[RMDB]
RNA sequence: GGGAACGACUCGAGUAGAGUCGAAAACUCGGAGGAGCGCUUCAGGGAUCCCCGGGGAAACCUGGAGCGAACUGGCAAUAAGGACGGUGGGGAGUGCCUUGGUCGACCUGCGUAAUUCCCGCCGAAACCAAUAUACUGGGUUCGCCCAGUAUAUUGGAAAAGAAACAACAACAACAAC
Reactivity to 2A3 in 0.01 (KOAc 150mM, MgCl2 10mM, bicine 150mM(pH8.5), 24C), signal-to-noise 2, nucleotides 027 to 126: c010u010c020g050g050a100g010g040a080g090c020g000c000u010u000c000a000g000g010g000a040u030c020c020c000c060g300g030g020g000a020a010a000c000c000u010g000g000a030g000c020g000a000a000c000u000g080g000c040a100a180u160a200a120g070g010a050c030g000g020u050g010g010g000g040a020g030u050g000c020c000u090u100g080g040u110c090g030a210c030c000u050g030c040g030u010a040a070u030u070c010c000c010g000c010c000g040a080a010a020
Reactivity to DMS in 0.01 (KOAc 150mM, MgCl2 10mM, bicine 150mM(pH8.5), 24C), signal-to-noise 1, nucleotides 027 to 126: c030u010c010g010g010a170g000g000a110g070c040g000c030u000u000c030a000g010g000g010a300u000c010c010c030c190g040g030g010g000a030a050a220c010c000u020g000g000a000g010c020g000a010a020c060u000g000g010c100a050a110u000a060a100g000g000a110c030g000g010u000g010g010g020g000a100g000u000g000c000c000u000u000g000g010u010c160g010a060c080c020u010g000c070g000u010a070a070u000u000c020c010c000g010c060c050g010a060a090a140